[RMDB]
RNA sequence: GGGAACGACUCGAGUAGAGUCGAAAAUGGAUUCGACGCCGGUGAUGAAACUUUAGGUGCAUGCCGAGUUGGUAACAGAACUCGUAAAUCCACUGUUGCAACUUUCUAUAGUUGCCAAUGACGAAAACUACGGUGCUCAACUAGCUGCGUAAGCAGCCUCUAAGCGUGCCUUCGGGCACGCUUAGAGAAAAGAAACAACAACAACAAC
Reactivity to 2A3 in 0.01 (KOAc 150mM, MgCl2 10mM, bicine 150mM(pH8.5), 24C), signal-to-noise 1, nucleotides 027 to 156: u100g000g010a050u120u120c040g010a040c020g090c100c100g040g060u070g040a050u050g040a000a060a190c110u080u120u210a080g010g000u040g000c060a050u160g000c040c020g000a020g000u000u000g040g010u040a020a020c030a060g020a010a010c000u000c010g000u070a070a060a060u070c020c000a020c110u040g030u090u050g030c000a000a000c030u070u220u120c100u300a110u160a200g000u020u030g040c000c000a110a290u120g070a020c120g130a040a040a040a040c030u090a030c030g050g000u050g100c010u000c030a000a110c030u080a030g030c000u010g000c000g010u040a030a140g030c010a000g000c000
This 207-nucleotide RNA was probed chemically with 2A3. Values are in units of 0.01, from 0 to 300, in steps of 10. Reactivities are given for positions 27 through 156. The reactions ran in a buffer of 150 mM KOAc, 10 mM MgCl2 and 150 mM bicine (pH 8.5), at 24 C. It was measured as part of the RMDB library ARCHII.